Conditions: 150 mM KOAc, 10 mM MgCl2 and 150 mM bicine (pH 8.5), 24 C. An RNA of 177 nucleotides, treated with DMS and read out base by base. It was measured as part of the RMDB library TTRINS. Reactivities are given for positions 27 through 126. Reactivities are rounded to 0.1 and cut off at 0 and 3.
RNA sequence: GGGAACGACUCGAGUAGAGUCGAAAAGAUAUGGACACUUGAAGCUCCAUUCAGAACACAUCCAUGUAUGUCGGAAACGACAUACAUGGAUGUGGUUCUGAUGGAGCGUAUCAAGUGUCCUAAGUCACAAGCAGUGAAAGUUCGCUUUCACUGCUUGAAAAGAAACAACAACAACAAC
Reactivity to DMS in 0.01 (KOAc 150mM, MgCl2 10mM, bicine 150mM(pH8.5), 24C), signal-to-noise 1, nucleotides 027 to 126: g010a010u010a300u010g010g000a020c000a000c000u000u010g010a050a150g000c000u000c000c000a010u000u010c000a000g010a000a030c010a030c000a000u000c000c000a020u000g010u010a000u000g000u010c000g010g010a170a140a280c000g040a000c000a010u000a010c000a010u020g010g010a000u000g010u010g020g010u000u000c000u000g000a030u000g000g000a030g010c010g000u030a020u000c000a000a000g010u000g000u000c000c000u000a000a030g000u010c030a300